[RMDB]
RNA sequence: GGGAACGACUCGAGUAGAGUCGAAAAGCGGUGAGGCGUCCUUUGGCAAUGGCGGAACCGACGAUAUAGCCAUAGGCGGCGUUGGGGGCUUCUUCAUGCCAUUCGUAGGCGUAGCGUGCCGUGCCGGCUAAUGAGUCAUCUUCGGAUGACUCAUUAGAAAAGAAACAACAACAACAAC
Reactivity to 2A3 in 0.01 (KOAc 150mM, MgCl2 10mM, bicine 150mM(pH8.5), 24C), signal-to-noise 4, nucleotides 027 to 126: g020c010g020g020u060g050a050g050g030c010g010u210c010c000u080u030u080g080g000c060a090a140u030g020g000c010g060g010a020a060c020c000g010a000c000g010a010u100a030u130a300g040c030c040a200u180a250g060g000c030g010g000c010g000u010u030g030g010g010g030g050c040u060u040c000u070u050c120a060u090g010c010c000a020u040u030c070g060u120a040g000g000c000g020u010a020g150c080g050u120g000c000c010g000u030g040c010c000g020g030
Reactivity to DMS in 0.01 (KOAc 150mM, MgCl2 10mM, bicine 150mM(pH8.5), 24C), signal-to-noise 5, nucleotides 027 to 126: g020c000g010g010u000g010a300g010g000c020g010u010c020c030u010u000u000g020g010c080a040a030u000g010g010c060g000g000a100a080c030c020g010a050c020g010a030u000a120u000a150g020c010c030a170u010a160g030g050c040g000g010c030g010u000u000g010g000g000g010g000c140u010u020c050u010u000c050a060u010g010c010c010a030u000u000c110g010u000a060g010g000c020g010u000a060g010c030g030u010g000c000c010g010u000g010c020c020g020g020

Chemical mapping of a 177-nucleotide RNA with 2A3 and DMS. The data come from the RNA Mapping Database (RMDB), library OK2TRN. Reactivities are given for positions 27 through 126. 2A3 adducts were read by reverse transcription with SuperScript II with manganese.